The record gives the reactivity of an RNA of 177 nucleotides to 2A3 and DMS. For 2A3, 1,317 sequencing reads were counted. For DMS the reverse transcriptase was MarathonRT. The data come from the RNA Mapping Database (RMDB), library OK1LIB. 2A3 adducts were read by reverse transcription with SuperScript II with manganese.
RNA sequence: GGGAACGACUCGAGUAGAGUCGAAAACAACUACCGUCAGCUGGAGCUGUACCAGAUUUUAGAGAGGGAGUCGCGAGGCCAGUCUCGCAACAUGGUGUGGCACCUGUUGCGUCUGGACUCGGUGUCGACGGUGACCUACUUUCGAGUAGGUCACCGUAAAAGAAACAACAACAACAAC
Reactivity to 2A3 in 0.01 (KOAc 150mM, MgCl2 10mM, bicine 150mM(pH8.5), 24C), signal-to-noise 3, nucleotides 027 to 126: c000a010a040c010u140a110c000c000g060u070c030a060g000c000u060g020g040a110g040c080u060g060u040a090c000c030a000g010a080u050u070u130u160a190g010a000g020a080g040g060g010a000g040u020c040g000c010g110a010g020g010c000c000a010g000u000c060u000c100g000c000a000a000c040a060u300g000g090u220g020u300g170g040c060a040c000c000u000g020u030u000g000c000g000u020c000u000g020g000a040c000u000c010g010g020u030g040u000c060g070
Reactivity to DMS in 0.01 (KOAc 150mM, MgCl2 10mM, bicine 150mM(pH8.5), 24C), signal-to-noise 1, nucleotides 027 to 126: c170a050a110c070u000a130c020c070g000u000c090a140g000c080u020g000g000a090g000c140u050g000u000a050c060c010a030g000a060u000u000u000u060a130g000a050g060a110g000g000g000a090g000u000c030g030c040g060a000g030g000c000c000a010g000u050c050u010c020g000c000a000a000c000a010u110g060g010u000g040u060g000g070c110a030c000c030u000g040u010u030g000c010g000u000c020u000g000g000a000c000u000c060g000g010u000g020u010c030g000